[RMDB]
RNA sequence: GGGAACGACUCGAGUAGAGUCGAAAAGCGUCAGAGAAAGAAAUGGUGUCAGUGCCACCGCCAGCAAGGUCGUACUUAUCGUCCUUGGUGAGGUUGGCAAAGUUAGUACGAUAAGUAUCACCUACCACCGGAAGAAUCAAUUCGUUGAUUCUUCCGGAAAAGAAACAACAACAACAAC
Reactivity to DMS in 0.01 (KOAc 150mM, MgCl2 10mM, bicine 150mM(pH8.5), 24C), signal-to-noise 3, nucleotides 027 to 126: g000c080g000u000c060a050g000a110g010a070a110a090g000a070a090a090u020g000g030u000g010u000c040a050g050u000g020c010c010a050c010c010g020c170c010a050g010c030a030a000g000g000u000c030g020u000a110c300u000u000a060u010c010g030u000c000c000u010u010g000g010u010g010a190g010g010u000u000g030g020c020a010a020a040g010u000u000a100g020u000a010c030g000a090u010a060a120g010u000a020u000c080a030c020c020u000a130c060c080a140
Reactivity to 2A3 in 0.01 (KOAc 150mM, MgCl2 10mM, bicine 150mM(pH8.5), 24C), signal-to-noise 2, nucleotides 027 to 126: g070c020g050u070c070a040g030a010g100a230a120a000g070a050a130a050u150g020g020u020g020u010c050a060g070u000g030c000c010a010c000c000g130c140c000a040g050c020a010a020g000g000u000c010g030u030a130c080u160u140a090u230c010g010u000c000c000u070u000g000g090u020g070a030g000g040u220u180g010g000c000a000a040a000g010u030u070a030g040u040a010c040g000a060u020a250a050g030u040a020u040c010a000c020c010u030a050c000c040a040
This 177-nucleotide RNA was probed chemically with DMS and 2A3.
The reactions ran in a buffer of 150 mM KOAc, 10 mM MgCl2 and 150 mM bicine (pH 8.5), at 24 C.
DMS adducts were read by reverse transcription with MarathonRT.
As a SHAPE reagent, 2A3 marks flexible, mostly unpaired nucleotides at the ribose 2'-OH.
For 2A3 the reverse transcriptase was SuperScript II with manganese.